[RMDB]
An RNA of 207 nucleotides, treated with 2A3 and read out base by base.
RNA sequence: GGGAACGACUCGAGUAGAGUCGAAAAUUCAGUAGGAAUGGUACCAAGCUCUUCUUUGUAGCACUGGUAGAAAUCAGCUGUGAAUCCAUCUGGUCCUGGGCUUUUUUUGUGGUUAGGCUAUUUAUUACUGCCUCAAUUUCAGAACUCGUUAUUAGUCCGGUGUUCAUAGUUUCGACUAUGAACACCGAAAAGAAACAACAACAACAAC
Reactivity to 2A3 in 0.01 (KOAc 150mM, MgCl2 10mM, bicine 150mM(pH8.5), 24C), signal-to-noise 1, nucleotides 027 to 156: u110u050c020a000g040u040a130g000g200a060a030u050g000g000u030a040c070c080a050a070g000c010u020c000u160u060c080u150u180u220g040u030a000g000c010a030c030u070g010g000u050a010g090a010a140a040u030c050a040g040c120u040g010u050g120a140a020u050c030c020a040u140c040u100g010g010u010c020c000u010g040g010g040c070u090u120u020u120u050u190u050g030u030g050g030u020u050a020g070g000c020u010a000u050u200u030a110u040u180a070c050u150g020c010c000u000c030a000a110u010u110u050c020a010g030a130a070c000u000c140g090u040u080a070u070u080a030g080u000c020